[RMDB]
RNA sequence: GGGAACGACUCGAGUAGAGUCGAAAACCGCAUUCGUGCGGGACCUAACCUUUGUGGACUCAGUACAUACAGGGAGGCUGAGGCGUCCCAUUGGGACGACAAAGCCAUCGAUCUGUAUGGAACCGUCCACUCUGGUGCGUGCCUAGUUCGCUAGGAAUCCCCUGUAUUUAUUCGUAAAUACAGGGGAAAAAGAAACAACAACAACAAC
Reactivity to 2A3 in 0.01 (KOAc 150mM, MgCl2 10mM, bicine 150mM(pH8.5), 24C), signal-to-noise 6, nucleotides 027 to 156: c000c000g000c000a030u060u110c280g150u050g020c010g010g000g070a060c000c010u020a040a050c000c000u020u000u010g000u000g000g000a000c000u000c000a000g010u000a000c000a000u000a000c000a000g000g000g010a010g000g010c000u010g010a020g020g080c000g000u010c020c000c080a190u180u300g020g010g000a000c000g000a010c010a000a030a000g000c010c010a060u090c010g010a020u000c000u000g000u000a000u000g000g000a000a000c000c000g000u000c000c000a000c000u010c000u000g010g000u020g070c080g160u150g040c000c000u010a020g020u060u100c300g040c100u020a010g010g050a030a060
Reactivity to DMS in 0.01 (KOAc 150mM, MgCl2 10mM, bicine 150mM(pH8.5), 24C), signal-to-noise 4, nucleotides 027 to 156: c000c000g040c000a060u000u000c230g040u010g040c010g000g000g010a030c010c020u000a070a020c010c000u000u000u000g010u000g010g020a060c000u010c030a130g030u000a220c000a040u000a030c040a050g010g000g010a030g060g050c010u000g000a300g000g000c010g010u000c000c000c010a220u010u010g020g010g020a030c010g000a010c010a020a210a100g010c000c000a140u000c080g010a040u000c010u000g000u000a020u000g000g020a090a110c190c300g010u000c010c000a020c010u000c000u000g010g030u000g000c100g010u000g020c010c010u000a040g010u000u010c240g020c020u000a030g000g020a220a250
An RNA of 207 nucleotides, treated with 2A3 and DMS and read out base by base. Reactivities are given for positions 27 through 156. High 2A3 reactivity points to a flexible backbone, as in loops and unpaired stretches. The reactions ran in a buffer of 150 mM KOAc, 10 mM MgCl2 and 150 mM bicine (pH 8.5), at 24 C. For DMS the reverse transcriptase was MarathonRT.